[RMDB]
RNA sequence: GGGAACGACUCGAGUAGAGUCGAAAAUCAUCGAGGCAGAAAACUAACAAAGAUGUUUGGACCCAAAUUCAACACUUGACCAAAUGCAACUAAUAGACAUGUACAGAACUCUCCACCCCCAAACAACAGAAUAUACAUUCUUCUCAUCUGCAGAUGAAGACAAGCCUGGUUUCGACCAGGCUUGUCUAAAAGAAACAACAACAACAAC
Reactivity to 2A3 in 0.01 (KOAc 150mM, MgCl2 10mM, bicine 150mM(pH8.5), 24C), signal-to-noise 1, nucleotides 027 to 156: u010c000a050u010c040g010a100g100g000c050a000g100a040a020a010a000c060u040a050a000c030a060a060a000g060a140u050g030u040u010u180g010g000a050c000c000c020a150a020a060u190u130c070a010a020c030a020c050u130u120g050a130c010c020a000a010a160u200g010c020a050a000c040u100a000a230u100a140g090a010c030a060u100g000u050a020c020a020g090a110a140c030u000c000u000c100c010a080c010c020c010c000c040a000a050a050c000a000a000c010a020g140a180a010u070a000u020a220c000a010u100u000c040u080u070c110u000c000a140u000c030u120g010c010a010g050a020u040g030a030